An RNA of 177 nucleotides, treated with 2A3 and DMS and read out base by base. For 2A3 the reverse transcriptase was SuperScript II with manganese. It was measured as part of the RMDB library OK2TRN. The RNA was probed in 150 mM KOAc, 10 mM MgCl2 and 150 mM bicine (pH 8.5) at 24 C. Reactivities are given for positions 27 through 126. For 2A3, 819 sequencing reads were counted.

[RMDB]
RNA sequence: GGGAACGACUCGAGUAGAGUCGAAAAUGUGUGGUGUCAGGAUGUGGUAGCUCUGAAGUGUCUACUGAGUAGAGCCCUGAACUGUUUUGUGCUUCAAUUGUAGACUAACAUAAAUGCCACCAAGGCAAGUCACCAACAGUUUCGACUGUUGGUGACUAAAAGAAACAACAACAACAAC
Reactivity to 2A3 in 0.01 (KOAc 150mM, MgCl2 10mM, bicine 150mM(pH8.5), 24C), signal-to-noise 1, nucleotides 027 to 126: u150g060u040g020u020g110g060u020g000u050c000a030g070g050a140u080g010u010g090g030u040a010g000c000u010c040u180g000a180a050g050u010g010u020c020u000a020c010u020g000a020g040u120a010g110a030g000c000c040c000u050g130a100a030c040u030g070u030u210u110u030g030u060g030c010u050u060c010a010a220u040u130g020u010a020g000a030c000u050a090a030c050a070u170a100a100a030u130g000c000c000a030c000c040a020a000g050g010c040a000
Reactivity to DMS in 0.01 (KOAc 150mM, MgCl2 10mM, bicine 150mM(pH8.5), 24C), signal-to-noise 2, nucleotides 027 to 126: u010g010u020g040u000g000g030u030g030u000c040a020g010g010a040u010g010u000g000g000u000a080g010c030u000c040u000g010a080a080g000u010g000u000c020u010a020c020u010g010a120g030u000a110g030a040g000c000c030c000u000g020a070a140c220u010g000u010u010u000u000g040u000g010c040u000u000c070a090a070u000u000g010u000a050g000a040c020u000a010a070c080a070u000a070a060a120u000g010c000c000a050c130c100a070a160g020g000c080a060